[RMDB]
RNA sequence: GGGAACGACUCGAGUAGAGUCGAAAACGACGUAGUGGUGCCACUAUUGGCUGCCGGGAGUGACGGGCCGGGUUAAAGUCGUUAAUGGUAACCGAACUUAACAUGCCACUAAGCCUGCUCUUAACCAUAAUUUAGAGACCUUCGGGUCUCUAAAUUAAAAAGAAACAACAACAACAAC
Reactivity to DMS in 0.01 (KOAc 150mM, MgCl2 10mM, bicine 150mM(pH8.5), 24C), signal-to-noise 2, nucleotides 027 to 126: c080g010a050c080g020u010a060g030u010g030g020u000g020c020c030a060c220u000a120u010u010g010g020c010u010g010c030c030g030g000g000a070g010u000g010a110c070g000g010g030c040c020g010g010g000u000u000a030a030a050g010u000c040g000u000u010a070a060u000g000g010u000a090a120c140c040g000a070a040c080u000u010a020a050c100a100u000g010c010c030a010c050u000a060a130g020c020c010u000g000c070u000c060u010u000a080a100c040c050a130
An RNA of 177 nucleotides, treated with DMS and read out base by base. DMS adducts were read by reverse transcription with MarathonRT. The RNA was probed in 150 mM KOAc, 10 mM MgCl2 and 150 mM bicine (pH 8.5) at 24 C.